Background
The data come from the RNA Mapping Database (RMDB), library TTRDEL. Chemical mapping of a 177-nucleotide RNA with 2A3 and DMS. For DMS the reverse transcriptase was MarathonRT. The DMS profile rests on 2,684 reads.

RNA sequence: GGGAACGACUCGAGUAGAGUCGAAAAGAUAUGGAUAACGCGAUAAGCUCCUAGUCGGAAACGACUAUGAGCUUUUGACGCGUGUCCUAAGUCAAAAUCAGCGUCGUUCUUCGGAACGACGCUGAAACCUAAUAGUUGUCUUCGGACAACUAUUAGGAAAAGAAACAACAACAACAAC
Reactivity to 2A3 in 0.01 (KOAc 150mM, MgCl2 10mM, bicine 150mM(pH8.5), 24C), signal-to-noise 2, nucleotides 027 to 126: g010a000u100a010u120g000g000a020u120a300a070c010g010c000g020a060u020a140a100g020c010u020c010c020u000a000g020u000c010g000g000a090a040a040c010g000a000c010u000a000u020g020a010g010c070u060u020u000u040g030a020c020g010c000g010u000g000u000c020c010u010a090a050g030u000c030a050a000a000a300u020c020a000g020c020g020u000c000g000u070u010c030u060u070c250g030g010a040a000c000g000a000c030g010c000u000g000a000a000a000
Reactivity to DMS in 0.01 (KOAc 150mM, MgCl2 10mM, bicine 150mM(pH8.5), 24C), signal-to-noise 2, nucleotides 027 to 126: g000a020u010a300u010g000g000a020u000a100a020c010g030c010g010a130u000a010a040g010c000u000c000c070u000a000g000u000c000g000g000a110a050a170c000g000a010c000u000a000u010g000a030g000c000u000u000u000u000g010a190c070g000c000g020u010g010u000c000c000u010a020a160g000u010c020a050a070a110a140u000c000a000g010c000g000u000c000g030u020u000c000u010u020c220g030g000a000a000c000g020a000c000g000c000u010g000a010a050a090